[RMDB]
RNA sequence: GGGAACGACUCGAGUAGAGUCGAAAAAACGUCUUUCAGCGGUUUUCCACCCUGGGCGGGUCAGGUGUUCCUUGCCCUCAUUCCGGUAAACCCACAACCUUCCAGCGUGGGCGUUAGGGCCAUUAUGGCCCCUCAAGAUGUUCGCAUCUUGAGGGGCAAAAGAAACAACAACAACAAC
Reactivity to DMS in 0.01 (KOAc 150mM, MgCl2 10mM, bicine 150mM(pH8.5), 24C), signal-to-noise 2, nucleotides 027 to 126: a030a030c010g020u010c040u010u020u020c230a100g010c060g000g000u010u000u010u000c030c050a090c090c020c010u000g000g000g020c120g010g000g010u010c040a070g030g040u020g000u000u000c020c020u000u010g020c020c000c010u010c100a130u010u000c080c040g010g010u020a030a090a130c010c000c010a030c070a080a080c050c080u000u010c090c080a070g000c120g030u000g000g000g000c050g010u000u000a070g000g000g000c000c100a150u000u020a160u010g010
Reactivity to 2A3 in 0.01 (KOAc 150mM, MgCl2 10mM, bicine 150mM(pH8.5), 24C), signal-to-noise 1, nucleotides 027 to 126: a010a010c020g030u000c040u050u110u080c030a020g000c020g040g000u020u050u080u000c010c000a060c020c000c010u040g010g070g010c050g000g000g010u060c050a030g120g090u090g000u110u050c040c030u000u110g050c000c020c000u020c040a070u150u040c040c030g020g000u070a040a030a060c000c030c000a040c000a090a140c010c060u170u110c030c030a020g050c050g050u030g030g080g020c040g010u000u040a010g000g020g000c020c010a040u090u230a160u230g150

This 177-nucleotide RNA was probed chemically with DMS and 2A3. For DMS, 1,811 sequencing reads were counted. DMS adducts were read by reverse transcription with MarathonRT. As a SHAPE reagent, 2A3 marks flexible, mostly unpaired nucleotides at the ribose 2'-OH. For 2A3 the reverse transcriptase was SuperScript II with manganese. It was measured as part of the RMDB library OK2TRN.